Conditions: 150 mM KOAc, 10 mM MgCl2 and 150 mM bicine (pH 8.5), 24 C. The record gives the reactivity of an RNA of 177 nucleotides to DMS and 2A3. Values cover nucleotides 27 to 126. For 2A3 the reverse transcriptase was SuperScript II with manganese.
RNA sequence: GGGAACGACUCGAGUAGAGUCGAAAAGCAUGGCCGCCGUCAGCUCGUACCGUGAGGCGUCCUGUUAAGUCAGGCAACGAGCGAGACCCGCACUCCUAAUUGCCAGCAACACCCUCGUGGUGGUUGGGCACUAUGUUACGUUCGCGUAACAUAGUGCAAAAGAAACAACAACAACAAC
Reactivity to DMS in 0.01 (KOAc 150mM, MgCl2 10mM, bicine 150mM(pH8.5), 24C), signal-to-noise 2, nucleotides 027 to 126: g020c080a090u010g010g000c050c020g010c020c040g000u000c060a160g030c020u000c040g050u000a220c030c060g010u020g000a200g030g010c200g010u000c020c000u040g000u000u000a100a130g020u000c060a060g020g000c250a210a040c090g000a040g010c020g010a090g020a050c030c080c050g020c020a090c080u000c010c030u000a070a120u000u010g000c000c000a060g000c020a050a080c020a030c000c000c020u020c300g020u000g010g010u000g000g000u000u000g000g010
Reactivity to 2A3 in 0.01 (KOAc 150mM, MgCl2 10mM, bicine 150mM(pH8.5), 24C), signal-to-noise 1, nucleotides 027 to 126: g050c040a070u090g050g010c050c040g010c030c020g020u010c040a000g000c000u040c030g030u000a070c040c020g080u060g090a060g030g040c050g030u060c010c010u040g010u050u050a150a180g300u060c060a010g000g020c050a060a010c000g000a000g020c040g000a030g000a070c000c000c000g000c000a020c020u040c010c020u020a000a150u110u120g000c020c010a010g020c000a040a090c000a020c000c030c000u080c160g150u300g000g050u040g000g060u000u030g000g030